[RMDB]
An RNA of 177 nucleotides, treated with 2A3 and DMS and read out base by base. The data come from the RNA Mapping Database (RMDB), library OK2TRN. For DMS, 1,002 sequencing reads were counted.

RNA sequence: GGGAACGACUCGAGUAGAGUCGAAAAUGGGAGUGCAUUAACUAUCGAAUCACCAAAUAUUUUAUGCCUCAUUUCUUCGAGGACUUGUAUGAAGAAUGAUGCCAUGUCGCUCAUUGCAUCUUCAGGACUGCUGUGUGAACUUCGGUUCACACAGCAGAAAAGAAACAACAACAACAAC
Reactivity to 2A3 in 0.01 (KOAc 150mM, MgCl2 10mM, bicine 150mM(pH8.5), 24C), signal-to-noise 1, nucleotides 027 to 126: u140g040g060g010a120g030u160g000c050a040u050u140a100a040c030u050a070u160c040g100a110a060u170c050a040c090c020a080a190a020u140a140u060u300u060u110a070u100g000c020c010u020c000a000u080u110u090c110u040u090c070g020a050g000g110a030c040u160u080g130u110a100u240g090a050a030g000a090a000u160g020a010u060g000c060c010a040u110g070u140c040g020c050u050c070a000u040u050g040c000a030u000c000u070u050c010a010g000g070a070
Reactivity to DMS in 0.01 (KOAc 150mM, MgCl2 10mM, bicine 150mM(pH8.5), 24C), signal-to-noise 2, nucleotides 027 to 126: u000g030g020g040a050g000u020g000c040a040u010u020a050a090c150u000a050u010c130g030a230a120u010c110a090c080c050a130a100a050u000a060u000u010u010u000a040u000g000c020c000u020c020a080u010u010u020c100u020u000c080g010a090g000g000a110c090u010u000g040u000a120u000g010a050a080g000a030a040u000g000a000u000g020c010c110a070u000g020u000c300g010c060u000c030a050u040u010g020c060a050u010c020u030u000c030a100g010g000a220